[RMDB]
RNA sequence: GGGAACGACUCGAGUAGAGUCGAAAAUCGCUCUUGAAGCGCAGCUGCAGGAGCUGCAGGCCGAGCGCGAGGCGCUCAAGGCGACCGCGGAGGAUGCCGAGACCAAGGUGUCCGCCGCGCAGGUCGCGGAUAUCUGGGCUUUCGAGCCCAGAUAUCCAAAAGAAACAACAACAACAAC
Reactivity to DMS in 0.01 (KOAc 150mM, MgCl2 10mM, bicine 150mM(pH8.5), 24C), signal-to-noise 2, nucleotides 027 to 126: u000c010g040c000u000c010u000u000g010a110a300g000c180g040c070a040g010c020u010g000c180a120g000g010a090g020c010u010g000c070a080g000g000c300c090g000a040g000c080g030c030g010a040g010g030c280g030c000u000c030a080a100g000g010c000g030a010c000c000g010c000g000g000a040g000g010a010u000g000c030c000g040a180g000a170c300c300a050a160g000g010u000g020u000c010c000g000c010c010g000c010g030c280a030g030g010u000c000g000c010
Reactivity to 2A3 in 0.01 (KOAc 150mM, MgCl2 10mM, bicine 150mM(pH8.5), 24C), signal-to-noise 1, nucleotides 027 to 126: u010c000g000c000u020c010u040u090g060a110a000g010c050g040c070a030g000c010u090g120c070a110g100g280a040g030c020u020g000c040a020g050g060c000c010g020a000g000c020g010c020g020a070g040g030c160g000c050u000c030a030a060g220g000c010g030a010c020c060g020c010g000g020a000g000g000a000u020g000c030c000g080a110g120a070c090c030a100a070g000g000u030g000u000c000c000g000c020c000g000c000g000c050a040g010g000u020c020g000c030
An RNA of 177 nucleotides, treated with DMS and 2A3 and read out base by base.
For 2A3, 1,272 sequencing reads were counted.
2A3 adducts were read by reverse transcription with SuperScript II with manganese.
In probing experiments dimethyl sulfate is read out at A N1 and C N3, which are open when not base-paired.
For DMS the reverse transcriptase was MarathonRT.